[RMDB]
RNA sequence: GGGAACGACUCGAGUAGAGUCGAAAAAAGCAACAGUGACUCCGGCGCGACGGAGAAUGAUGGCUCAACAGCGGCAGAGAACGCUAGGUCGGAAGCCCAGUCUUCGUUCUUCGUAUUCGGAGACUUGGCCAGCCAGGUUGCAGGCGACAUUGCGACCAGGUUAAGACGAUUUCGAUCGUCUUAACCUAAAAGAAACAACAACAACAAC
Reactivity to 2A3 in 0.01 (KOAc 150mM, MgCl2 10mM, bicine 150mM(pH8.5), 24C), signal-to-noise 2, nucleotides 027 to 156: a000a000g050c070a040a040c060a090g040u060g130a140c010u020c020c010g010g050c050g030c110g100a020c020g010g010a010g030a020a000u020g000a000u060g040g030c030u030c110a150a070c060a150g030c000g050g000c060a070g050a010g040a300a030c010g020c060u040a070g050g120u080c060g090g060a060a000g000c000c010c020a000g000u030c000u000u000c020g000u020u000c080u050u040c080g030u060a100u070u110c000g010g000a000g000a010c010u030u030g020g010c000c000a000g000c000c000a010g000g000u000u010g040c000a000g030g000c040g040a040c060a140u060u000g000c000g010a000c000c000
Reactivity to DMS in 0.01 (KOAc 150mM, MgCl2 10mM, bicine 150mM(pH8.5), 24C), signal-to-noise 1, nucleotides 027 to 156: a090a050g020c100a030a170c030a080g010u020g010a150c020u000c020c000g030g000c300g000c270g000a080c140g030g010a040g020a020a070u000g000a130u000g010g030c000u000c100a010a130c100a100g010c020g010g000c090a150g000a270g050a040a130c040g000c070u000a090g020g060u000c000g000g000a300a220g010c040c010c030a090g010u000c000u000u010c030g000u000u000c010u010u010c160g030u000a250u010u000c000g010g000a010g000a040c070u000u010g000g040c000c000a130g000c000c020a020g020g010u000u000g000c000a070g030g000c070g040a020c130a130u000u000g010c020g000a130c040c020